[RMDB]
RNA sequence: GGGAACGACUCGAGUAGAGUCGAAAAUCCAAACCACCACUCAAUCGUAAUUAUGUUUUUACUGGUUAUCAUAUAACCAAAAAUAGUAAAGUGCAGCUCGGUGAGUACAUUUUCGAGCGCAUUGAUUAAAGGAUAUGAUUCGUCAUAUCCAAAAGAAACAACAACAACAAC
Reactivity to DMS in 0.01 (KOAc 150mM, MgCl2 10mM, bicine 150mM(pH8.5), 24C), signal-to-noise 6, nucleotides 027 to 129: u050c000c000a000a080a140c090c050a050c020c030a090c070u030c040a030a030u040c080g030u030a030a020u030u030a080u050g010u010u010u000u000u010a080c040u000g000g000u030u030a020u000c200a100u010a300u000a070a010c040c000a010a030a040a040a060u030a100g050u060a030a060a020g010u000g000c040a100g050c030u020c040g000g000u040g020a000g010u000a120c190a050u000u000u000u000c030g000a030g020c020g000c020a010u020u020g010a010u020u010a000a090a130
Reactivity to 2A3 in 0.01 (KOAc 150mM, MgCl2 10mM, bicine 150mM(pH8.5), 24C), signal-to-noise 9, nucleotides 027 to 129: u000c000c000a020a000a030c050c020a030c010c010a060c050u080c050a030a090u090c040g090u100a090a050u130u130a100u150g180u050u090u010u040u080a080c060u020g000g000u010u010a020u060c080a020u110a020u060a200a040c000c010a010a010a010a050a070u180a040g090u100a020a100a030g010u010g000c040a030g000c050u000c020g020g000u040g030a040g060u130a070c030a220u090u070u040u090c020g000a000g010c000g000c000a010u010u040g040a010u050u120a120a050a030
This 170-nucleotide RNA was probed chemically with DMS and 2A3. The reactions ran in a buffer of 150 mM KOAc, 10 mM MgCl2 and 150 mM bicine (pH 8.5), at 24 C. The data come from the RNA Mapping Database (RMDB), library 15KLIB. 2A3 adducts were read by reverse transcription with SuperScript II with manganese. The 2A3 profile rests on 55,643 reads.